RNA sequence: GGGAACGACUCGAGUAGAGUCGAAAAUAUAGGUGAAAGCCCUAUAUGCCUCUAUGGCUUACCCUUUCCAACUAGGCUUCCAAGACGCCACUUCACCCAUCAUAGAAGAACUCCUACACUUUCACGAUCACACCUUAAUAAUCGUAUUCUUAAUCAGCACUAAUCAUUUCUUCGGAAAUGAUUAGUGAAAAGAAACAACAACAACAAC
Reactivity to 2A3 in 0.01 (KOAc 150mM, MgCl2 10mM, bicine 150mM(pH8.5), 24C), signal-to-noise 8, nucleotides 027 to 156: u030a000u000a000g000g000u010g030a060a020a010g040c000c000c000u000a010u000a000u020g010c020c010u040c100u160a170u250g030g000c040u020u120a100c000c000c000u020u060u020c060c030a070a050c050u070a050g050g000c010u070u020c030c010a050a030g040a050c030g010c020c010a030c020u060u060c030a060c010c040c010a060u070c030a030u070a100g080a100a010g010a060a040c020u020c020c000u070a050c040a050c090u050u110u110c060a030c060g030a060u040c020a020c010a040c070c020u100u120a100a030u090a090a030u150c030g020u050a170u110u050c020u050u100a110a130u100c050a020g080
Reactivity to DMS in 0.01 (KOAc 150mM, MgCl2 10mM, bicine 150mM(pH8.5), 24C), signal-to-noise 2, nucleotides 027 to 156: u000a050u010a010g020g000u000g000a100a170a250g010c060c000c000u000a040u010a020u000g020c000c000u010c090u000a120u010g020g030c020u010u000a070c020c010c010u000u000u000c020c010a050a060c040u000a100g030g020c000u000u010c020c010a070a080g010a140c060g030c000c030a050c070u000u000c050a070c040c010c030a090u000c050a090u000a060g000a050a070g020a040a060c030u000c040c040u010a060c090a070c020u000u000u000c050a040c030g000a010u000c020a080c010a100c040c010u000u010a050a130u000a040a060u000c040g020u000a090u000u000c030u000u000a040a080u020c050a090g000